Chemical mapping of a 177-nucleotide RNA with DMS and 2A3. The 2A3 profile rests on 1,912 reads. The RNA was probed in 150 mM KOAc, 10 mM MgCl2 and 150 mM bicine (pH 8.5) at 24 C. Values cover nucleotides 27 to 126.
RNA sequence: GGGAACGACUCGAGUAGAGUCGAAAACUACAACUUGUGUGUUGAUCUGCUGAUGACAAUGUAGUUAGUGCUCGAUUAUGUAUGCGAUGGAGAUCAACUGGCUAUAAAGCGCAGACUACCUGAUGGACUAUCCAUCGUCAUUCGUGACGAUGGAUAGAAAAGAAACAACAACAACAAC
Reactivity to DMS in 0.01 (KOAc 150mM, MgCl2 10mM, bicine 150mM(pH8.5), 24C), signal-to-noise 2, nucleotides 027 to 126: c050u000a050c120a130a090c150u000u020g020u020g020u030g030u000u010g000a100u000c000u000g000c040u010g020a090u020g010a110c080a070a180u000g030u000a010g000u000u020a000g040u000g010c030u000c050g030a030u000u010a060u050g010u010a140u040g050c090g010a020u000g000g000a010g000a060u020c100a040a000c020u050g000g000c030u000a090u010a030a130a130g020c090g030c000a050g000a020c140u000a030c100c070u030g000a040u030g020g010a300
Reactivity to 2A3 in 0.01 (KOAc 150mM, MgCl2 10mM, bicine 150mM(pH8.5), 24C), signal-to-noise 4, nucleotides 027 to 126: c070u110a070c020a180a100c110u130u100g080u030g030u010g000u110u050g000a120u010c020u030g000c060u080g050a140u100g030a080c060a100a180u130g000u020a020g000u000u000a000g000u000g000c010u000c000g020a010u040u000a060u270g300u060a060u100g150c070g040a030u110g100g000a000g000a000u020c020a020a020c010u000g000g000c000u020a020u040a150a040a050g070c040g020c030a000g040a030c010u060a050c030c030u050g050a090u140g040g000a010